[RMDB]
RNA sequence: GGGAACGACUCGAGUAGAGUCGAAAAGGAUGCAACGUAGUAAUAUGUGUGACUGCCACCUCUUCGGUUACGCAUUACUAUUCAUGAUGUCAUAGAAGAGGUGGAUGACGUCAUGAAAUCUGCAUCGCUACAUGAUUGUAUUCGUACAGUCAUGUAGAAAAGAAACAACAACAACAAC
Reactivity to DMS in 0.01 (KOAc 150mM, MgCl2 10mM, bicine 150mM(pH8.5), 24C), signal-to-noise 9, nucleotides 027 to 126: g010g000a010u000g010c010a050a110c180g020u000a030g010u010a110a110u000a030u000g020u000g010u000g010a030c040u000g000c010c010a030c010c010u000c010u000u000c010g010g020u010u010a090c270g010c010a010u000u000a040c170u010a130u010u010c220a160u000g000a010u000g010u000c080a100u010a140g000a030a020g000a020g010g010u000g000g000a010u010g010a050c180g010u000c000a010u000g000a050a070a080u010c150u000g010c000a010u000c010g000
Reactivity to 2A3 in 0.01 (KOAc 150mM, MgCl2 10mM, bicine 150mM(pH8.5), 24C), signal-to-noise 9, nucleotides 027 to 126: g040g000a000u010g000c020a040a040c090g050u050a050g040u070a080a160u050a110u170g120u020g010u010g040a020c010u030g020c010c010a020c010c010u020c000u020u020c010g090g020u100u080a030c050g000c010a010u030u040a060c070u160a100u110u150c040a030u100g030a040u030g040u050c030a030u030a130g020a020a010g010a020g010g010u010g010g000a000u010g020a000c030g000u000c000a000u020g050a060a060a030u080c050u030g000c000a000u010c010g000